[RMDB]
RNA sequence: GGGAACGACUCGAGUAGAGUCGAAAACGCUCAGGAGAAGAGCGCAAAAGUCGAUCGAAUACAGAUCGACAUCUCCAGAAGCCGCAAAUUAUAUUAAAGGGAGGGAAGCGGCACCCAAACCCAAUAACCAUGUACCUACCUUCGGGUAGGUACAUGGAAAAGAAACAACAACAACAAC
Reactivity to 2A3 in 0.01 (KOAc 150mM, MgCl2 10mM, bicine 150mM(pH8.5), 24C), signal-to-noise 1, nucleotides 027 to 126: c000g020c010u000c000a010g070g000a050g000a300a020g020a070g000c020g000c080a300a280a000a000g000u000c000g000a010u010c010g000a140a020u160a220c090a070g010a010u000c000g050a000c000a000u040c000u010c000c000a000g130a120a000g000c000c060g040c070a120a120a060u300u120a210u110a030u260u300a250a190a040g030g060g020a020g000g070g000a130a070g010c000g040g000c000a030c000c000c010a220a240a200c010c000c000a000a140u160a030a070
This 177-nucleotide RNA was probed chemically with 2A3. The reactions ran in a buffer of 150 mM KOAc, 10 mM MgCl2 and 150 mM bicine (pH 8.5), at 24 C. 2A3 adducts were read by reverse transcription with SuperScript II with manganese. It was measured as part of the RMDB library OK2TRN.